[RMDB]
RNA sequence: GGGAACGACUCGAGUAGAGUCGAAAAUUCCCCUAUUUCGAUAGGGGAACACCUGCGGGCGGCUCGCAGUUCCGACUUCCUCCUCCUCUGAGUCAAUGGGCGAUAGGCCUCGGUUCGCCGAGGCCAAGUCGCUGAUAUAAUUCGUUAUAUCAGCGACAAAAGAAACAACAACAACAAC
Reactivity to DMS in 0.01 (KOAc 150mM, MgCl2 10mM, bicine 150mM(pH8.5), 24C), signal-to-noise 6, nucleotides 027 to 126: u000u000c000c000c000c000u000a000u000u000u010c140g010a020u000a010g000g000g000g010a010a020c120a080c090c010u000g020c050g010g010g020c080g010g010c040u000c040g010c070a060g000u000u000c030c010g000a100c070u000u000c020c020u000c020c010u000c020c010u000c040u000g010a120g010u000c060a090a100u000g000g000g010c040g010a110u000a110g020g010c000c000u000c000g010g000u000u010c190g020c000c000g000a010g000g010c000c000a000a030
Reactivity to 2A3 in 0.01 (KOAc 150mM, MgCl2 10mM, bicine 150mM(pH8.5), 24C), signal-to-noise 3, nucleotides 027 to 126: u020u000c010c000c000c000u020a030u010u120u090c140g100a000u010a010g000g000g000g000a000a000c020a040c010c010u020g010c010g040g060g000c040g010g010c040u040c030g000c020a000g020u070u010c030c020g070a070c020u100u040c000c020u010c000c000u010c000c010u020c030u050g020a010g020u020c000a040a120u070g040g030g010c030g030a030u060a110g010g000c010c010u000c000g030g040u040u040c170g000c030c020g010a020g000g010c010c000a000a000